[RMDB]
The record gives the reactivity of an RNA of 177 nucleotides to 2A3 and DMS. For 2A3, 988 sequencing reads were counted. The reactions ran in a buffer of 150 mM KOAc, 10 mM MgCl2 and 150 mM bicine (pH 8.5), at 24 C.
RNA sequence: GGGAACGACUCGAGUAGAGUCGAAAAGGUGCGCAUCAAAGAUGGCUUGGAUGUCCCUGCGCGUGUGCUGCGCCUGCGAUAUGCCGGCCACAAAUCGGGGCCUCCCAGCAAGGGGCACAUGGUGAAGAUUCCUCCUCGUGUUCGCACGAGGAGGAAUAAAAGAAACAACAACAACAAC
Reactivity to 2A3 in 0.01 (KOAc 150mM, MgCl2 10mM, bicine 150mM(pH8.5), 24C), signal-to-noise 1, nucleotides 027 to 126: g070g000u090g000c060g030c020a030u040c060a010a110a120g130a230u100g010g080c000u060u210g020g000a020u000g070u080c010c020c000u030g000c020g050c120g040u010g030u130g050c090u000g000c000g060c050c030u100g070c060g030a040u030a030u300g030c010c000g020g020c000c000a000c000a010a090a020u090c040g000g000g000g050c000c000u040c010c020c010a020g060c010a000a070g070g030g000g070c010a000c010a070u160g030g000u150g060a090a070g000
Reactivity to DMS in 0.01 (KOAc 150mM, MgCl2 10mM, bicine 150mM(pH8.5), 24C), signal-to-noise 2, nucleotides 027 to 126: g000g020u000g050c050g060c020a070u000c110a080a090a090g000a050u000g010g010c030u010u000g010g000a070u000g020u000c010c010c020u000g000c010g030c300g030u000g000u010g040c120u000g000c100g000c010c050u000g000c160g010a070u010a060u000g000c000c020g010g000c010c010a100c070a030a210a090u010c120g000g000g000g000c010c100u000c010c000c050a100g000c070a120a110g000g010g010g000c080a040c070a040u000g010g010u000g010a050a120g010